This 177-nucleotide RNA was probed chemically with 2A3 and DMS. In probing experiments dimethyl sulfate is read out at A N1 and C N3, which are open when not base-paired. The RNA was probed in 150 mM KOAc, 10 mM MgCl2 and 150 mM bicine (pH 8.5) at 24 C.
RNA sequence: GGGAACGACUCGAGUAGAGUCGAAAAGACGCCUGUGUGGCGAAGCGAGCAUGAGAAAGAGCCGCAUAUUAAACAGUCCAUCUAGCGGCAAGAUGGAUUGCUCGCAAAAAGAUCCAUAUCACUGAGAAUAUCGUAUUUAGUUCGCUAAAUACGAUAUAAAAGAAACAACAACAACAAC
Reactivity to 2A3 in 0.01 (KOAc 150mM, MgCl2 10mM, bicine 150mM(pH8.5), 24C), signal-to-noise 9, nucleotides 027 to 126: g070a020c020g050c010c010u150g070u080g090u160g120g010c030g010a040a010g000c000g010a000g010c020a030u110g040a060g170a190a150a020g130a030g010c010c000g030c070a020u060a060u160u280a050a050a030c050a040g070u000c000c000a000u000c010u030a110g010c000g000g000c000a000a000g000a000u010g000g000a000u000u020g000c000u000c000g000c000a010a010a010a010a010g040a020u030c020c020a030u070a020u180c090a080c110u110g040a020g060a180
Reactivity to DMS in 0.01 (KOAc 150mM, MgCl2 10mM, bicine 150mM(pH8.5), 24C), signal-to-noise 8, nucleotides 027 to 126: g010a180c070g020c010c000u000g030u030g000u030g000g010c030g020a130a140g010c010g010a000g000c000a030u010g010a300g020a080a130a140g000a230g000c000c010g010c020a170u030a060u020u020a050a070a080c170a110g010u020c020c050a030u000c030u010a120g000c000g010g000c010a070a050g000a060u000g000g000a110u010u000g000c010u000c000g010c000a040a070a050a080a030g010a110u030c020c010a090u020a070u040c120a070c070u010g000a100g000a100

For DMS, 20,641 sequencing reads were counted. Values cover nucleotides 27 to 126.